Record summary
This 177-nucleotide RNA was probed chemically with 2A3. The reactions ran in a buffer of 150 mM KOAc, 10 mM MgCl2 and 150 mM bicine (pH 8.5), at 24 C. Values cover nucleotides 27 to 126. Reactivities are rounded to 0.1 and cut off at 0 and 3.
RNA sequence: GGGAACGACUCGAGUAGAGUCGAAAACGCGAUCUCCUCCGCCGAGCGCGCCUGGUCCAGCGUCUUGGCCACGGUCGCCGGGACGGCGACCACCUUCAGCAGGGUCUUCAGAUUGGCCAGACCCUCGUCGGGUUGGCUAUUUCGAUAGCCAACCCGAAAAAGAAACAACAACAACAAC
Reactivity to 2A3 in 0.01 (KOAc 150mM, MgCl2 10mM, bicine 150mM(pH8.5), 24C), signal-to-noise 1, nucleotides 027 to 126: c100g020c020g020a190u070c020u020c040c010u020c040c040g030c010c030g040a010g040c060g000c000g020c020c000u070g000g050u020c000c000a040g050c010g030u010c020u040u030g020g000c000c000a040c100g010g000u000c000g000c000c000g220g050g050a080c200g020g000c020g000a010c000c000a030c000c010u170u160c060a050g020c010a040g020g030g040u030c000u070u020c030a160g090a300u130u150g030g030c000c010a000g020a030c000c000c000u010c010g020